[RMDB]
RNA sequence: GGGAACGACUCGAGUAGAGUCGAAAACAUGCGUCAUUAUUCGCGUGGGAAUAUGGGUGGCAUGAACAUCCAACCCUAAAUAUUACUCAAGUCCGAUAGCAAAGAAGUACCGUGAGGGAAAACUGAAUUAUGAGUCUAUGUUCGCAUAGACUCAUAAAAAAGAAACAACAACAACAAC
Reactivity to DMS in 0.01 (KOAc 150mM, MgCl2 10mM, bicine 150mM(pH8.5), 24C), signal-to-noise 8, nucleotides 027 to 126: c020a020u010g010c010g010u010c200a130u020u020a130u020u020c020g020c050g030u010g010g000g010a060a060u010a060u010g010g000g030u000g010g010c100a110u020g020a120a100c100a050u000c020c010a040a110c010c010c000u020a050a050a080u030a080u020u000a080c030u000c050a060a050g000u000c030c050g000a090u010a070g010c080a070a050a080g000a100a060g020u010a110c050c050g000u030g000a130g000g000g000a060a040a060a090c040u010g000a090a150
Reactivity to 2A3 in 0.01 (KOAc 150mM, MgCl2 10mM, bicine 150mM(pH8.5), 24C), signal-to-noise 9, nucleotides 027 to 126: c010a010u030g010c040g040u040c080a150u080u290a100u150u090c020g010c010g020u040g000g020g080a040a060u120a110u100g040g020g000u030g040g000c090a130u160g060a100a030c020a010u020c010c000a040a130c030c000c000u030a060a070a020u140a040u100u110a060c030u040c070a050a030g050u020c010c010g060a070u070a050g050c040a060a050a090g060a090a020g050u050a030c010c050g050u070g050a080g000g020g000a020a050a040a060c050u050g020a050a030